[RMDB]
RNA sequence: GGGAACGACUCGAGUAGAGUCGAAAAGACGCUGAUGCGAUCGACUGUAAGAUAGAUACACUGAGCAGACAGAUACGUACGGCAAGUAUCGUCGCCAGAAUUACAGUCGCAAAUUGCCGUACGAAGAACCACUGGUACGGUUCGCCGUACCAGUGGUAAAAGAAACAACAACAACAAC
Reactivity to DMS in 0.01 (KOAc 150mM, MgCl2 10mM, bicine 150mM(pH8.5), 24C), signal-to-noise 2, nucleotides 027 to 126: g010a070c020g020c000u000g000a130u000g050c000g040a300u000c000g000a070c040u000g000u020a000a000g000a220u090a140g000a250u030a160c260a300c010u000g000a050g000c110a030g000a030c030a060g050a060u110a010c030g000u000a050c040g000g010c000a070a060g040u000a000u000c020g000u000c000g010c010c000a040g000a090a300u000u020a010c000a010g000u000c010g000c300a050a060a070u010u000g000c000c030g050u040a050c270g000a260a110g000a090
Reactivity to 2A3 in 0.01 (KOAc 150mM, MgCl2 10mM, bicine 150mM(pH8.5), 24C), signal-to-noise 4, nucleotides 027 to 126: g050a030c020g000c070u210g070a160u230g050c020g080a160u050c020g000a000c000u000g010u000a000a000g060a150u220a080g120a050u180a170c090a040c010u020g010a020g030c060a070g030a040c030a030g040a070u040a080c010g040u020a000c010g020g000c000a000a070g030u040a020u100c020g000u000c020g000c000c010a000g040a010a000u000u000a000c000a000g010u000c000g000c030a060a130a020u030u020g000c000c000g000u010a020c020g040a070a020g050a060